RNA sequence: GGGAACGACUCGAGUAGAGUCGAAAAGAUAUGGACCCAUGUGGACAUGGUCCAACUCGGAAACGAGUUAGGACCAACAGCCACGAUGGGUCCUAAGUCAAAAGACAUUGUCUUCGGACAAUGUCAAGCUAUCAACGACGUUCGCGUCGUUGAUAGCAAAAGAAACAACAACAACAAC
Reactivity to 2A3 in 0.01 (KOAc 150mM, MgCl2 10mM, bicine 150mM(pH8.5), 24C), signal-to-noise 1, nucleotides 027 to 126: g020a020u020a010u020g010g000a020c000c010c010a010u030g020u000g060g010a120c160a300u230g000g070u000c000c010a010a040c000u010c000g020g040a060a010a020c030g000a000g020u030u010a060g000g000a020c070c000a050a040c050a010g030c000c000a010c090g080a030u010g000g020g010u000c000c010u000a010a000g020u000c000a000a050a050a120g030a010c000a000u020u000g000u020c000u060u090c300g100g000a030c010a020a000u040g010u000c000a010a020
Reactivity to DMS in 0.01 (KOAc 150mM, MgCl2 10mM, bicine 150mM(pH8.5), 24C), signal-to-noise 1, nucleotides 027 to 126: g010a010u000a180u010g000g000a010c000c000c010a010u000g010u030g000g030a030c060a150u000g020g020u010c000c000a030a030c000u000c020g010g000a030a030a060c000g000a010g010u000u000a090g000g010a030c000c010a050a050c250a220g000c000c000a000c020g010a020u000g010g000g020u000c000c010u010a010a040g000u020c010a150a080a150a170g010a030c000a000u010u000g020u000c000u000u030c190g010g000a000c000a000a000u000g010u000c000a050a080
The record gives the reactivity of an RNA of 177 nucleotides to 2A3 and DMS.
DMS adducts were read by reverse transcription with MarathonRT.
Reactivities are given for positions 27 through 126.
Conditions: 150 mM KOAc, 10 mM MgCl2 and 150 mM bicine (pH 8.5), 24 C.
The 2A3 profile rests on 2,630 reads.